[RMDB]
RNA sequence: GGGAACGACUCGAGUAGAGUCGAAAAACUUACAAUUCGUAAAGGUCAAAUGGCCUGGCAAAAAAACUUAUGACAUUGAAGUUUUAAAUAAGGAUGGUAGUCUAACUUUGGGUUAUAUCAAAUGGUGCAGCUAAUAGUCUUUCGAGACUAUUAGCUGAAAAGAAACAACAACAACAAC
Reactivity to DMS in 0.01 (KOAc 150mM, MgCl2 10mM, bicine 150mM(pH8.5), 24C), signal-to-noise 4, nucleotides 027 to 126: a040c020u010u030a110c020a010a010u000u000c020g020u010a040a030a060g010g010u010c040a110a130a110u020g000g020c040c010u010g000g030c120a010a000a080a160a060a060a090c140u000u000a020u010g010a030c220a020u010u000g000a050a010g000u000u000u010u000a030a060a110u020a110a090g000g000a050u020g020g020u010a050g010u000c030u010a060a070c100u000u020u010g010g010g010u010u010a070u020a100u010c100a030a060a030u010g010g010u000g000
Reactivity to 2A3 in 0.01 (KOAc 150mM, MgCl2 10mM, bicine 150mM(pH8.5), 24C), signal-to-noise 4, nucleotides 027 to 126: a000c020u010u130a140c030a040a020u020u090c000g030u050a120a130a060g030g010u040c050a090a110a300u300g030g000c000c000u020g070g010c050a050a080a000a000a000a020a160c020u040u020a020u090g040a100c070a090u020u090g000a010a000g000u000u000u050u070a120a230a110u130a030a010g130g000a030u060g040g070u070a050g020u050c070u070a050a180c090u140u180u120g070g010g020u090u060a070u040a030u080c050a060a060a080u150g030g000u140g090